[RMDB]
The record gives the reactivity of an RNA of 177 nucleotides to 2A3 and DMS.
The data come from the RNA Mapping Database (RMDB), libraries RFM100 and RFMREP.
2A3 adducts were read by reverse transcription with SuperScript II with manganese.
RNA sequence: GGGAACGACUCGAGUAGAGUCGAAAAAGGUAUUGCGCCAGACAACCAAAAGUUGUGCUGUUGCGCGUUGUAGGUAUUAGUUAAGCCUUUAGCUAAUAGACGGGAUACUUAAGCCGUAAAGUCGGCAACAAAGUAAGAGGUUCGCCUCUUACUUUGUAAAAGAAACAACAACAACAAC
Reactivity to 2A3 in 0.01 (KOAc 150mM, MgCl2 10mM, bicine 150mM(pH8.5), 24C), signal-to-noise 7, nucleotides 027 to 126: a000g170g020u200a120u100u190g010c000g010c000c000a010g000a000c000a010a010c010c050a040a030a050a050g010u030u020g050u130g200c010u040g040u140u170g010c000g000c000g000u000u030g010u020a060g030g040u020a020u000u040a020g010u010u020a110a140g120c030c100u070u070u030a010g000c010u010a030a010u000a030g040a050c030g050g080g030a030u030a070c000u080u050a090a010g000c000c000g000u000a010a000a010g060u080c000g010g010c000a000
Reactivity to DMS in 0.01 (KOAc 150mM, MgCl2 10mM, bicine 150mM(pH8.5), 24C), signal-to-noise 9, nucleotides 027 to 126: a050g010g010u010a040u020u020g010c000g020c010c000a010g010a030c000a010a010c010c050a110a100a140a300g000u000u000g010u010g010c000u000g000u030u020g010c010g030c010g010u020u010g000u000a090g000g010u000a010u000u000a020g010u000u000a020a050g010c170c170u010u000u000a020g000c000u000a010a010u000a020g010a100c080g010g000g000a070u010a020c010u000u010a080a130g000c000c000g000u000a060a090a160g020u020c000g000g000c010a200